[RMDB]
RNA sequence: GGGAACGACUCGAGUAGAGUCGAAAAUGUCCACCUGCCUCGCGUCUUACGGGGACUUUGUAGCUCUUACAUUAUCAGAACAUGGCCUGCGGAUGGCAGGCAAUGGUCGGGCUACGCACUUUACCCACAAUUUGACCCAUUGCUCCGCAGGUAACAGCUACUUGCGGCUUUUCGAAGCCGCAAGUAGAAAAGAAACAACAACAACAAC
Reactivity to 2A3 in 0.01 (KOAc 150mM, MgCl2 10mM, bicine 150mM(pH8.5), 24C), signal-to-noise 1, nucleotides 027 to 156: u230g010u070c010c000a110c070c050u070g000c040c000u080c050g050c170g030u090c130u120u040a020c060g030g000g030g000a030c020u000u120u140g050u030a000g000c000u000c010u020u130a130c120a180u160u300a140u300c130a070g170a190a000c010a020u180g000g000c010c000u000g000c000g080g020a070u090g080g180c100a000g010g030c130a000a020u040g000g010u040c050g000g000g000c000u010a000c000g100c060a070c000u140u160u180a170c000c000c000a100c030a000a090u080u080u280g000a070c140c020c020a000u000u080g000c000u050c040c010g000c050a000g000g000u000a050a000c020a000g000